Structure probing data (2A3 and DMS) for a 207-nucleotide construct.
RNA sequence: GGGAACGACUCGAGUAGAGUCGAAAAGGGCAAGGUCUCUCUUGAUAUGUUACUGGGGACUGGCCAAUUCCUGUCCCCUUCUUCUCAGAUAAAAUUGUCUAAGGAUGUCUUAAAAGAUGUCACCACAAAUGCUGUGUUAGCAUGGAGGGCCAUUCCGCACCUCUACCUAGUUCGCUAGGUAGAGGUGAAAAGAAACAACAACAACAAC
Reactivity to 2A3 in 0.01 (KOAc 150mM, MgCl2 10mM, bicine 150mM(pH8.5), 24C), signal-to-noise 3, nucleotides 027 to 156: g030g010g050c070a040a110g040g010u010c090u020c010u000c030u170u120g070a040u050a070u200g100u110u110a060c120u100g000g000g000g020a000c030u070g020g010c060c020a050a060u190u080c010c000u000g000u000c000c010c020c000u000u050c020u030u000c020u000c020a000g010a060u080a050a150a050a090u100u060g030u050c080u110a030a040g040g000a000u000g030u020c000u030u240a120a140a010a000g010a010u010g000u000c000a020c080c000a030c040a050a090a020u110g010c010u010g010u030g040u270u070a010g000c030a040u040g000g000a020g030g020g000c010c030a070u090u030c000c010g010
Reactivity to DMS in 0.01 (KOAc 150mM, MgCl2 10mM, bicine 150mM(pH8.5), 24C), signal-to-noise 1, nucleotides 027 to 156: g000g030g060c080a060a080g000g010u010c020u000c010u010c030u000u010g010a160u010a090u020g040u000u010a090c160u000g010g010g050g020a040c000u010g050g030c180c070a110a250u010u000c010c000u000g040u000c010c010c000c020u010u000c030u000u000c040u000c030a090g050a100u010a030a050a140a150u000u000g020u000c000u000a040a040g010g000a030u000g000u000c020u020u000a090a100a090a120g010a030u000g140u000c040a190c050c010a060c100a130a100a110u000g010c020u000g030u000g010u000u000a040g010c050a070u000g010g010a160g000g050g020c020c040a170u010u000c000c000g000
Conditions: 150 mM KOAc, 10 mM MgCl2 and 150 mM bicine (pH 8.5), 24 C.